[RMDB]
RNA sequence: GGGAACGACUCGAGUAGAGUCGAAAAAAUAACAGGUCUGUGAUGCCCUUAGAUGCACGCGCGCUACAAUAAUAUUUCCUAGACCGAGAGGUCCGGGUAAACCGCUGAACCGCUUUCAUGCUUGGGACUCAUAUGUCUAGUUCGCUAGACAUAUGAGAAAAGAAACAACAACAACAAC
Reactivity to DMS in 0.01 (KOAc 150mM, MgCl2 10mM, bicine 150mM(pH8.5), 24C), signal-to-noise 2, nucleotides 027 to 126: a040a050u010a060a090c070a050g020g000u010c020u000g020u010g000a140u000g020c030c030c020u000u020a090g000a110u010g010c080a050c130g010c070g030c040g000c050u000a060c110a070a080u010a050a060u010a110u010u010u000c000c010u000a100g000a020c000c000g000a230g000a190g010g000u010c010c030g020g020g000u010a040a080a050c090c040g000c070u000g000a060a110c070c040g000c050u010u000u010c030a050u000g000c020u010u000g000g000g020a210
Reactivity to 2A3 in 0.01 (KOAc 150mM, MgCl2 10mM, bicine 150mM(pH8.5), 24C), signal-to-noise 2, nucleotides 027 to 126: a000a000u210a030a030c070a060g050g060u000c020u060g040u050g050a070u070g040c000c010c000u010u030a110g010a150u080g060c040a020c050g030c000g010c030g010c040u110a040c070a050a030u140a160a040u080a180u090u070u020c000c000u010a010g000a010c000c030g010a010g000a010g040g010u030c020c020g000g020g000u030a060a040a010c020c010g020c050u010g030a030a010c010c000g010c040u050u090u070c050a040u090g020c000u000u090g030g000g040a060
Structure probing data (DMS and 2A3) for a 177-nucleotide construct. For 2A3, 2,392 sequencing reads were counted. The RNA was probed in 150 mM KOAc, 10 mM MgCl2 and 150 mM bicine (pH 8.5) at 24 C.